An RNA of 177 nucleotides, treated with 2A3 and DMS and read out base by base. The reactions ran in a buffer of 150 mM KOAc, 10 mM MgCl2 and 150 mM bicine (pH 8.5), at 24 C. Values cover nucleotides 27 to 126. The DMS profile rests on 30,413 reads. For 2A3, 38,133 sequencing reads were counted. 2A3 adducts were read by reverse transcription with SuperScript II with manganese.
RNA sequence: GGGAACGACUCGAGUAGAGUCGAAAAGGAGUGCUACCGAAAGGUAGCACUCCAACAAAUCGGUGUAAGUCAAGCCAGUCUUACACCGUGCGGCACAGCGGAAACGCUGAUGUCGUAUACAUGGCUAAUACGAUAAUUUAUUCGUAAAUUAUCGUAUAAAAGAAACAACAACAACAAC
Reactivity to 2A3 in 0.01 (KOAc 150mM, MgCl2 10mM, bicine 150mM(pH8.5), 24C), signal-to-noise 3, nucleotides 027 to 126: g010g000a000g000u010g010c010u000a000c010c010g060a080a070a070g010g000u000a000g000c000a000c000u000c000c000a000a000c000a000a000a000u080c000g000g000u000g000u000a010a010g010u020c100a050a000g010c000c000a030g030u040c000u000u000a000c000a000c000c000g000u020g000c000g000g000c000a000c000a010g010c000g010g030a080a050a010c020g000c000u000g010a080u010g000u000c000g000u000a000u010a010c050a050u040g000g000c000u000a020
Reactivity to DMS in 0.01 (KOAc 150mM, MgCl2 10mM, bicine 150mM(pH8.5), 24C), signal-to-noise 9, nucleotides 027 to 126: g010g010a020g030u000g020c010u000a010c010c000g010a120a130a190g010g020u000a000g010c000a000c000u000c000c010a020a040c100a040a060a040u010c010g010g010u000g000u000a000a010g000u000c060a100a050g000c000c010a050g000u010c000u000u000a010c000a000c000c000g020u000g000c010g010g010c010a020c010a010g010c000g010g000a130a100a190c000g020c000u000g000a050u000g030u000c000g020u000a040u010a100c190a080u000g000g010c000u000a180